Chemical mapping of a 207-nucleotide RNA with 2A3 and DMS. The RNA was probed in 150 mM KOAc, 10 mM MgCl2 and 150 mM bicine (pH 8.5) at 24 C. The DMS profile rests on 2,468 reads.
RNA sequence: GGGAACGACUCGAGUAGAGUCGAAAACGCUGGGCGAACGAGAGACCGACGACGCUAGCCGAGUCUCUACUGAAGCGCGCACGGUAGAGACGUUUGACGCUAGCAUCAGGUCUCGAGUUCGCCUGUGCUGAAGCGCGCACGGCAACCGAAAGGUGCGGUGAUUAGUUUGGUUCGCCAAACUAAUCACAAAAGAAACAACAACAACAAC
Reactivity to 2A3 in 0.01 (KOAc 150mM, MgCl2 10mM, bicine 150mM(pH8.5), 24C), signal-to-noise 2, nucleotides 027 to 156: c050g000c020u030g000g020g000c010g000a010a000c010g000a000g010a000g010a060c000c020g080a110c040g000a000c010g050c000u010a000g000c010c000g000a000g010u000c000u010c000u000a000c010u020g070a250a070g000c010g000c000g000c010a010c010g000g000u000a000g000a000g040a010c000g020u070u110u120g010a000c010g000c010u000a000g000c000a010u000c000a010g000g000u000c000u030c000g000a000g000u000u000c010g000c000c000u010g000u000g000c010u010g020a110a010g010c000g000c000g000c000a020c020g020g000c000a030a030c020c010g070a080a060a050g050g000u020g000c020g070
Reactivity to DMS in 0.01 (KOAc 150mM, MgCl2 10mM, bicine 150mM(pH8.5), 24C), signal-to-noise 1, nucleotides 027 to 156: c020g030c060u000g000g000g000c000g000a020a030c040g030a300g000a030g010a020c010c000g000a100c110g010a050c000g000c010u000a040g030c000c010g000a060g010u000c000u010c020u010a000c030u040g000a010a040g060c020g010c000g000c030a300c000g000g000u000a020g010a030g000a040c020g010u010u000u000g000a150c230g020c030u000a040g010c000a000u000c010a010g020g010u000c000u030c000g020a190g010u000u000c000g040c000c000u000g010u000g040c000u010g000a030a030g020c030g010c110g000c010a300c030g000g000c000a090a080c020c000g000a160a150a110g010g020u020g000c050g050
For 2A3, 5,364 sequencing reads were counted. Source: RMDB library RNAMAK, as collected in RNAgym. For 2A3 the reverse transcriptase was SuperScript II with manganese.